This 207-nucleotide RNA was probed chemically with 2A3 and DMS. For DMS, 2,129 sequencing reads were counted.
RNA sequence: GGGAACGACUCGAGUAGAGUCGAAAACACAGGCUAUCACAUGGUGAGGGGGCUGAACGUGCCAACGUGCUCACCCAGGACUCUCUUCCUCUUCUUAGGAAGCCACCAGUCCCGUUCCUGUGAUAACCCAUUAAUCUAUGAAUUGACCCACUGAUGACGACGAUUAAUCAUUCGUGAUUAAUCGUCGAAAAGAAACAACAACAACAAC
Reactivity to 2A3 in 0.01 (KOAc 150mM, MgCl2 10mM, bicine 150mM(pH8.5), 24C), signal-to-noise 5, nucleotides 027 to 156: c050a010c030a010g040g000c020u060a030u070c010a020c030a120u300g040g000u130g050a130g000g020g030g000g020c060u050g050a150a040c070g000u070g100c070c020a110a090c120g050u210g030c040u070c040a100c010c040c010a050g030g000a010c030u030c000u010c000u100u000c010c000u080c030u300u080c040u120u100a020g000g030a000a010g040c030c010a040c010c000a010g010u010c010c030c000g050u070u020c000c000u020g000u000g010a010u040a050a050c030c000c000a000u070u210a040a050u010c120u140a110u130g070a160a070u170u130g070a110c020c020c040a060c110u100g050a110u190g080a070
Reactivity to DMS in 0.01 (KOAc 150mM, MgCl2 10mM, bicine 150mM(pH8.5), 24C), signal-to-noise 1, nucleotides 027 to 156: c100a050c070a030g000g000c030u000a040u010c000a000c010a080u000g030g000u000g030a070g040g030g020g030g020c010u010g000a040a090c080g020u000g050c120c080a050a050c020g000u000g030c020u000c030a110c030c020c010a000g000g000a050c020u000c040u000c010u020u000c020c030u000c120u000u000c190u010u040a120g020g010a040a070g000c070c040a110c080c020a060g000u000c000c010c000g020u000u010c020c000u010g020u000g000a020u000a040a010c040c020c030a190u000u000a100a110u000c100u000a100u000g030a080a060u010u000g000a270c080c000c010a050c080u030g000a150u000g010a300
DMS adducts were read by reverse transcription with MarathonRT.